[RMDB]
RNA sequence: GGGAACGACUCGAGUAGAGUCGAAAACCUGCUCUGGAGCAGGGCUGGGAGAAAGACACGGCCUUCCUGCCUCAGCGGCACUCCCGAGCAACACGUGCCGAGCAGGGACCCACAGGGUCUCCACCUGCCCCUAUGUCAAAUUCGUUUGACAUAGGGGAAAAGAAACAACAACAACAAC
Reactivity to DMS in 0.01 (KOAc 150mM, MgCl2 10mM, bicine 150mM(pH8.5), 24C), signal-to-noise 4, nucleotides 027 to 126: c000c000u000g010c000u010c020u010g030g000a090g010c040a190g010g000g010c030u000g000g000g010a030g010a080a100a070g010a100c080a100c120g000g010c040c070u000u000c040c020u000g010c010c020u000c110a070g010c090g000g000c070a140c020u010c010c010c020g010a090g010c050a070a080c140a100c130g000u010g000c010c010g000a070g000c030a030g000g000g000a070c020c000c010a240c070a070g010g010g010u010c020u000c050c060a100c030c020u000g010
Reactivity to 2A3 in 0.01 (KOAc 150mM, MgCl2 10mM, bicine 150mM(pH8.5), 24C), signal-to-noise 5, nucleotides 027 to 126: c000c010u000g000c010u000c050u140g040g030a060g010c050a100g030g060g010c030u030g010g030g020a030g050a060a160a020g090a060c070a030c150g100g000c000c000u070u050c010c010u030g030c000c010u090c060a070g050c040g050g000c020a010c020u020c010c010c010g060a050g020c030a140a090c080a020c100g090u090g000c000c010g000a010g000c010a020g020g020g010a030c020c010c010a110c020a030g020g010g020u040c060u030c090c020a110c010c020u070g030